[RMDB]
RNA sequence: GGGAACGACUCGAGUAGAGUCGAAAACAAGGAGGGUAGUGUGAUCAAUUUCUGUUACAUGCAUCAAAUGGAACUUGCUAAUGGUACACAUACCGGUUCAGCAUUUGAUGGUACUAUGUAUGGUGCCGGAAGUCAUUGAGUUCGCUCAAUGACUUCCAAAAGAAACAACAACAACAAC
Reactivity to 2A3 in 0.01 (KOAc 150mM, MgCl2 10mM, bicine 150mM(pH8.5), 24C), signal-to-noise 2, nucleotides 027 to 126: c050a040a110g020g000a060g000g000g050u060a020g020u070g050u060g070a080u040c020a050a060u020u090u000c010u020g120u050u070a050c010a020u060g050c000a030u020c000a030a020a000u000g010g030a010a010c000u040u050g000c020u110a100a020u070g020g030u140a070c200a000c000a140u060a050c000c010g000g000u010u030c030a120g060c000a050u010u010u070g070a050u050g040g010u000a060c020u020a030u110g090u020a010u070g070g020u040g000c070c020
Reactivity to DMS in 0.01 (KOAc 150mM, MgCl2 10mM, bicine 150mM(pH8.5), 24C), signal-to-noise 2, nucleotides 027 to 126: c040a070a130g010g020a060g050g000g000u000a030g040u000g040u010g000a030u010c090a070a090u010u010u010c050u000g030u030u000a030c070a020u000g000c060a010u000c040a040a010a030u000g000g000a010a000c030u000u000g020c110u000a080a030u010g010g010u010a060c160a110c070a050u000a050c140c130g030g000u010u010c020a090g000c050a040u000u000u010g010a060u010g010g020u040a050c040u010a010u010g010u010a040u000g010g010u000g010c080c060